[RMDB]
RNA sequence: GGGAACGACUCGAGUAGAGUCGAAAACUCAACUCGUUCGCGAGUUGAGAAACCCGAUGAAGCGGCACUUAGACAGCUUCAUACACCUAACAAAAGUGCUAAAAAGAAAACGGUUCGCCGUUUUCAACGAUCUGUUAUGGUUCGCCAUAACAGAUCGAAAAGAAACAACAACAACAAC
Reactivity to 2A3 in 0.01 (KOAc 150mM, MgCl2 10mM, bicine 150mM(pH8.5), 24C), signal-to-noise 2, nucleotides 027 to 126: c000u000c010a000a000c000u020c010g030u070u030c080g020c030g080a010g000u010u000g000a000g010a040a040a010c000c000c000g010a020u020g000a010a000g050c000g030g040c020a000c020u030u020a030g050a170c020a050g000c000u010u010c000a000u050a020c050a030c020c080u140a210a100c050a050a110a000a050g020u010g000c020u120a140a120a040a030a000g040a020a010a000a010c000g000g030u020u050c280g000c060c000g010u000u000u000u000c010a020a010
Reactivity to DMS in 0.01 (KOAc 150mM, MgCl2 10mM, bicine 150mM(pH8.5), 24C), signal-to-noise 1, nucleotides 027 to 126: c010u010c000a010a000c000u000c000g020u000u010c200g010c030g000a000g000u010u000g000a000g000a010a080a140c030c000c000g020a050u010g020a020a040g010c030g010g030c000a020c060u000u000a070g000a090c130a190g000c000u000u010c000a010u000a120c170a160c170c110u010a130a110c090a090a040a060a020g000u000g020c100u000a090a040a090a080a100g000a000a000a000a050c000g000g010u010u020c220g000c000c000g010u000u000u000u000c000a090a190